[RMDB]
Annotation:
Structure probing data (DMS and 2A3) for a 177-nucleotide construct. DMS adducts were read by reverse transcription with MarathonRT. 2A3 adducts were read by reverse transcription with SuperScript II with manganese. The reactions ran in a buffer of 150 mM KOAc, 10 mM MgCl2 and 150 mM bicine (pH 8.5), at 24 C. Values are in units of 0.01, from 0 to 300, in steps of 10.

RNA sequence: GGGAACGACUCGAGUAGAGUCGAAAAUUGAGGUAUAGAAUCCUAUUCGCUCCUGAUAGGAGAAAUUCUAUAUUGCUUAUAUAUGUGCUUACGCACAUAUAUAAAUGCUCAUGCAAAACUGCAUGAAAUCCAAUCAUUGAUUCGUCAAUGAUUGGAUAAAAGAAACAACAACAACAAC
Reactivity to DMS in 0.01 (KOAc 150mM, MgCl2 10mM, bicine 150mM(pH8.5), 24C), signal-to-noise 6, nucleotides 027 to 126: u020u030g000a090g010g010u000a010u000a010g000a010a010u000c010c000u000a020u010u010c110g000c140u000c040c040u000g010a030u000a010g000g000a190g010a070a120a040u010u000c000u000a010u000a010u000u010g000c030u000u000a000u000a000u000a000u000g010u000g010c000u010u070a120c300g010c000a000c000a000u000a010u000a000u000a000a030a100u010g010c090u000c000a000u000g000c000a030a060a070a140c170u000g010c000a010u000g000a030a130
Reactivity to 2A3 in 0.01 (KOAc 150mM, MgCl2 10mM, bicine 150mM(pH8.5), 24C), signal-to-noise 9, nucleotides 027 to 126: u140u140g070a040g010g020u000a000u000a000g000a010a010u020c010c010u010a030u040u100c090g050c100u050c020c030u080g020a030u020a020g020g000a020g050a080a190a010u020u000c010u000a010u010a010u020u120g010c000u010u000a000u000a000u000a000u000g000u000g000c050u190u230a090c150g000c000a000c000a000u000a000u000a000u000a000a020a010u120g000c010u000c020a000u010g000c010a040a080a150a240c160u060g000c000a000u000g000a090a030